Conditions: 150 mM KOAc, 10 mM MgCl2 and 150 mM bicine (pH 8.5), 24 C.
The record gives the reactivity of an RNA of 207 nucleotides to 2A3 and DMS.
For 2A3 the reverse transcriptase was SuperScript II with manganese.
The DMS profile rests on 3,135 reads.

RNA sequence: GGGAACGACUCGAGUAGAGUCGAAAAGGAAACAAGACAGAAAAAGGUGUCCAGAGAAGUCAGAAGUUAGGUAGUGAGGGGCAAUGGGUUUAGAAUUCAGGCAGGAACAGACAAUGCAGGCGUUGUCUGCUAUCAAAAGGACACUGACUUCUGUGAAACUGGUCGUAAUAUUCGUAUUACGACCAGUAAAAGAAACAACAACAACAAC
Reactivity to 2A3 in 0.01 (KOAc 150mM, MgCl2 10mM, bicine 150mM(pH8.5), 24C), signal-to-noise 3, nucleotides 027 to 156: g060g020a030a070a000c030a040a030g100a030c020a040g060a030a080a000a020a010g060g000u030g010u000c030c000a010g010a000g020a090a020g050u080c030a000g010a080a020g090u080u180a070g060g020u050a030g020u020g080a030g020g010g000g000c020a030a090u040g000g010g000u060u050u030a070g010a070a030u170u050c020a020g030g000c010a010g060g030a050a040c000a010g030a010c000a000a070u050g070c010a030g100g020c070g030u010u020g000u000c000u010g000c010u070a060u170c020a070a080a060a000g000g000a010c000a000c000u010g020a030c030u010u000c010u000g010u020g040a050a070
Reactivity to DMS in 0.01 (KOAc 150mM, MgCl2 10mM, bicine 150mM(pH8.5), 24C), signal-to-noise 2, nucleotides 027 to 156: g000g000a170a060a120c030a100a150g010a120c030a080g010a050a050a060a190a290g050g000u030g020u000c040c000a180g020a090g010a070a040g000u000c070a070g000a020a120g000u000u010a070g020g040u000a080g020u000g000a090g000g010g030g010c030a040a090u000g010g040g000u000u000u000a110g000a080a130u000u000c070a040g030g020c020a050g020g020a030a020c070a060g030a020c020a020a030u020g030c020a180g010g000c070g040u000u000g000u000c000u000g010c010u020a070u020c080a040a050a090a090g000g020a040c030a070c010u000g000a140c120u000u000c010u020g020u010g010a080a050